[RMDB]
RNA sequence: GGGAACGACUCGAGUAGAGUCGAAAAGGGGUCGAUGUACAGAGCGGACCCAGCUUGGAUUUAUACAGCUGAAGCCUCCACGGCUGUAUUGUCAGCUGCUAACGCUCUGAUACAUCGACGGAGGCACCCAAAAGUACGCUCUUUCGAGAGCGUACAACUGAGAAUUAACCUUCGGGUUAAUUCUCAGAAAAGAAACAACAACAACAAC
Reactivity to DMS in 0.01 (KOAc 150mM, MgCl2 10mM, bicine 150mM(pH8.5), 24C), signal-to-noise 1, nucleotides 027 to 156: g040g020g050g020u010c030g030a060u060g020u010a000c010a030g000a040g050c000g020g010a170c300c290c020a050g000c030u040u000g030g010a160u000u010u010a040u000a060c040a000g030c000u000g000a100a160g010c060c020u000c010c070a300c000g000g030c000u050g000u000a040u000u020g000u010c020a110g000c050u000g020c040u020a110a300c040g000c010u010c000u000g010a140u000a030c030a000u000c010g000a010c060g000g030a030g010g050c040a160c000c000c020a070a110a120a160g050u000a000c000g000c000u000c000u000u000u020c260g020a030g000a020g040c000g000u010a000c010a050a090
Reactivity to 2A3 in 0.01 (KOAc 150mM, MgCl2 10mM, bicine 150mM(pH8.5), 24C), signal-to-noise 2, nucleotides 027 to 156: g010g000g010g030u000c000g000a010u000g000u000a010c000a000g010a020g000c010g000g000a000c010c000c010a010g010c030u110u150g120g010a010u050u300u090a040u100a000c000a000g000c000u020g050a220a020g030c010c020u050c030c020a020c030g000g000c000u000g010u020a010u000u030g020u000c010a020g010c000u010g030c020u040a110a000c000g000c000u000c000u000g000a010u000a000c000a010u010c000g000a000c030g000g000a010g000g030c030a060c020c000c030a050a170a030a020g010u000a000c000g010c010u030c010u040u070u150c260g140a040g000a000g010c000g010u000a000c000a000a000